[RMDB]
RNA sequence: GGGAACGACUCGAGUAGAGUCGAAAAGACUUAGAUACUGACAUACUGCAGCUGCGAUAAAAAAUCGUCUGGCCGCCUCGUGCCUACGAUGGGCUAGGGAAAUGCCGUGACGAGACACGCACUGGGUUCAUAUCAUCCUGUUCGCAGGAUGAUAUGAAAAAGAAACAACAACAACAAC
Reactivity to 2A3 in 0.01 (KOAc 150mM, MgCl2 10mM, bicine 150mM(pH8.5), 24C), signal-to-noise 8, nucleotides 027 to 126: g040a000c070u130u140a030g050a090u150a140c060u100g080a030c030a080u200a050c040u100g180c010a010g000c050u020g000c010g050a040u210a100a100a030a000a010a030u010c000g010u000c010u010g000g010c010c030g050c020c000u040c020g070u080g090c010c010u120a170c120g160a170u300g010g000g000c030u040a090g030g010g020a060a170a110u200g000c000c020g070u040g000a010c020g020a000g020a020c090a020c040g010c000a000c010u020g030g020g000u020
Reactivity to DMS in 0.01 (KOAc 150mM, MgCl2 10mM, bicine 150mM(pH8.5), 24C), signal-to-noise 5, nucleotides 027 to 126: g010a140c030u000u000a140g000a090u010a090c080u000g030a130c140a150u020a050c060u000g010c020a040g020c220u000g000c000g010a100u020a000a030a110a100a080a120u000c000g020u000c020u010g000g000c000c300g030c300c000u010c020g000u000g020c000c020u000a080c220g010a110u030g000g000g000c010u000a250g000g000g000a040a170a070u030g010c000c000g000u020g000a010c000g000a000g030a090c190a060c030g020c010a070c000u000g010g000g010u000